[RMDB]
RNA sequence: GGGAACGACUCGAGUAGAGUCGAAAAGAUAUGGAUAACAAGCCACUACCCACCUCGUCACACGGAGGGUCUCGGAAACGAGACCUCCCCACCCGUGAAGUCGAGAGGUGGCUUGUUAUCCUAAGUCCACUAUGGAGGAGUUCGCUCCUCCAUAGUGAAAAGAAACAACAACAACAAC
Reactivity to DMS in 0.01 (KOAc 150mM, MgCl2 10mM, bicine 150mM(pH8.5), 24C), signal-to-noise 4, nucleotides 027 to 126: g010a090u010a300u010g030g030a020u000a010a020c010a010a010g020c000c010a030c030u000a150c110c050c200a300c140c010u000c010g020u010c020a260c010a010c010g000g000a190g020g010g000u010c000u000c010g000g010a060a070a130c000g010a020g000a010c000c010u000c040c010c000c050a300c070c010c000g010u000g010a170a080g010u000c000g020a010g000a140g030g000u000g000g000c000u000u000g000u000u000a000u000c000c000u000a000a090g010u010c030